RNA sequence: GGGAACGACUCGAGUAGAGUCGAAAACGUGGAGGCCCAGGAGAAGGAGGUCAGCGGCCCCCGCAUUCCAAGCGCCUCGCUUCGGCUUGGCAAACCAAAUUCAGCAGCUGACAUCAGCAGUCAGCGCCACUGCUUAAGGCUUCGGCCUUAAGCAGUGAAAAGAAACAACAACAACAAC
Reactivity to 2A3 in 0.01 (KOAc 150mM, MgCl2 10mM, bicine 150mM(pH8.5), 24C), signal-to-noise 1, nucleotides 027 to 126: c080g020u100g010g020a020g000g050c000c030c020a030g100g070a090g020a090a080g060g060a070g060g010u040c050a000g120c120g110g010c020c000c000c020c000g000c030a070u090u000c010c020a030a030g060c070g030c070c000u070c010g010c020u020u020c100g040g010c000u010u020g000g030c010a110a000a010c050c060a010a060a050u150u160c040a020g010c030a040g010c020u000g000a000c000a050u150c060a080g130c030a040g050u000c000a000g000c000g010c000
Reactivity to DMS in 0.01 (KOAc 150mM, MgCl2 10mM, bicine 150mM(pH8.5), 24C), signal-to-noise 1, nucleotides 027 to 126: c180g070u000g030g000a090g010g000c050c050c120a110g010g000a140g010a070a200g010g010a030g010g040u000c070a060g040c100g040g000c020c040c000c010c000g050c100a090u000u050c010c030a090a090g010c180g000c000c010u000c070g030c000u000u010c250g000g000c000u040u000g010g040c050a100a110a210c100c140a020a110a110u000u010c160a130g000c010a050g020c000u000g000a000c000a060u010c230a040g010c180a050g010u000c000a030g020c000g000c020

Chemical mapping of a 177-nucleotide RNA with 2A3 and DMS. The RNA was probed in 150 mM KOAc, 10 mM MgCl2 and 150 mM bicine (pH 8.5) at 24 C. Source: RMDB library OK2TST, as collected in RNAgym. For DMS the reverse transcriptase was MarathonRT.